RNA sequence: GGGAACGACUCGAGUAGAGUCGAAAAGAUAUGGAAUCACCUGUUGAGCGAUAAGCGUGUAUCGGAAACGAUACAACGCUUUUGACGCUCAACGGUGAUUCCUAAGUCAAAGGCUCGUUCGCGAGCCGGUCACUUUAUGGUUCGCCAUAAAGUGACCAAAAGAAACAACAACAACAAC
Reactivity to 2A3 in 0.01 (KOAc 150mM, MgCl2 10mM, bicine 150mM(pH8.5), 24C), signal-to-noise 4, nucleotides 027 to 126: g020a030u090a060u170g000g020a010a000u000c030a000c040c180u300g000u010u000g000a010g010c030g040a090u020a100a010g010c020g000u010g000u000a000u010c010g000g050a120a040a040c040g020a000u010a020c050a110a110c050g010c010u020u000u000u030g030a010c000g000c000u000c000a000a000c000g000g000u010g010a010u000u020c000c000u000a000a000g010u000c040a160a070a140g020g000c000u000c010g040u120u100c300g030c010g110a000g000c000c020
Reactivity to DMS in 0.01 (KOAc 150mM, MgCl2 10mM, bicine 150mM(pH8.5), 24C), signal-to-noise 4, nucleotides 027 to 126: g000a040u010a300u010g000g000a010a000u000c000a000c000c000u030g040u000u000g000a010g020c000g030a180u000a010a000g020c000g040u000g000u000a000u000c010g010g000a150a110a270c000g010a010u000a000c000a050a030c020g010c000u000u000u000u000g020a220c080g010c000u000c000a010a010c010g000g000u000g010a000u000u000c000c000u000a010a080g000u000c050a100a110a160g010g000c000u000c000g020u010u010c210g010c010g000a020g020c000c010